[RMDB]
This 177-nucleotide RNA was probed chemically with 2A3 and DMS. The 2A3 profile rests on 920 reads. Source: RMDB libraries RFM100 and RFMREP, as collected in RNAgym.

RNA sequence: GGGAACGACUCGAGUAGAGUCGAAAAACGGUGGCACUACGGUGCCACCGAAGUUGGCUCAGUGGUCUGUCCAUCGUGGAAGGCCAAAAUGACUUGCUGAUUUCAGGAGCUUUGAUUUAUGCGUAAAUAUUCUUGCCGUAUUCGUACGGCAAGAAUAAAAAGAAACAACAACAACAAC
Reactivity to 2A3 in 0.01 (KOAc 150mM, MgCl2 10mM, bicine 150mM(pH8.5), 24C), signal-to-noise 2, nucleotides 027 to 126: a000c000g010g030u000g000g000c040a000c000u000a030c300g120g010u020g000c010c010a000c010c000g010a000a000g000u010u050g010g000c000u020c070a020g080u000g060g010u000c010u100g300u050c010c000a140u290c210g070u160g010g000a010a000g070g000c000c000a000a020a000a050u070g000a040c030u030u080g000c000u030g070a180u010u240u050c040a040g040g040a020g010c000u110u040u060g240a260u080u090u200a080u150g020c100g000u040a000a140a040
Reactivity to DMS in 0.01 (KOAc 150mM, MgCl2 10mM, bicine 150mM(pH8.5), 24C), signal-to-noise 2, nucleotides 027 to 126: a130c030g000g020u020g030g000c030a000c000u030a120c150g040g010u000g030c010c000a000c010c000g030a000a050g000u000u000g010g020c050u000c050a160g020u030g000g030u000c010u010g030u020c050c000a300u050c210g040u040g030g010a090a050g000g000c000c050a000a030a030a090u060g000a060c200u020u000g000c040u010g000a100u010u000u000c080a060g020g000a220g010c030u000u000u010g000a140u020u010u040a040u010g000c030g000u040a040a050a060